[RMDB]
RNA sequence: GGGAACGACUCGAGUAGAGUCGAAAAGGUAUCUAAUCUGCAUGUGUAAAUAACCAGCUCUAAGGAGGAUGUGAUAUACCACCCAGUGUGGGGACGGCUGGGUAUGGCAGUCGUUCUUACACUGAAGCAUGCACUGGAGUCACUUGGAGGCUUAUUAUAAUCGGAUUUAGUUCGCUAAAUCCGAUUAAAAAGAAACAACAACAACAAC
Reactivity to 2A3 in 0.01 (KOAc 150mM, MgCl2 10mM, bicine 150mM(pH8.5), 24C), signal-to-noise 2, nucleotides 027 to 156: g030g020u040a000u060c070u100a170a000u020c000u060g010c030a050u010g090u020g030u090a070a090a100u150a070a100c060c010a000g010c020u000c000u100a130a110g160g010a000g040g010a040u040g050u090g110a030u040a000u030a190c050c020a020c000c000c000a000g000u000g000u000g000g000g010g010a000c010g020g000c000u020g000g000g100u100a080u040g150g030c020a000g000u000c000g000u000u000c000u000u000a000c000a010c020u000g000a000a010g030c010a010u070g010c010a030c040u030g020g020a020g060u030c050a020c180u030u080g060g010a030g030g000c030u040u110a130u180u100a080
Reactivity to DMS in 0.01 (KOAc 150mM, MgCl2 10mM, bicine 150mM(pH8.5), 24C), signal-to-noise 1, nucleotides 027 to 156: g000g040u000a080u000c050u000a080a090u010c030u000g010c010a010u020g020u000g030u020a080a060a130u000a090a130c040c010a080g010c010u000c070u000a070a100g020g000a140g000g020a080u010g010u000g030a150u000a120u000a080c050c000a160c030c000c020a020g030u010g020u010g010g000g020g020a030c000g040g000c030u000g000g010g050u000a060u010g030g000c020a060g030u010c000g010u020u000c010u000u000a020c030a040c000u000g010a030a120g000c000a020u000g030c000a080c050u000g000g020a180g020u000c060a050c110u010u000g010g010a130g000g020c030u000u010a050u000u000a200
The record gives the reactivity of an RNA of 207 nucleotides to 2A3 and DMS. For DMS, 3,386 sequencing reads were counted. Source: RMDB library OK3TST, as collected in RNAgym.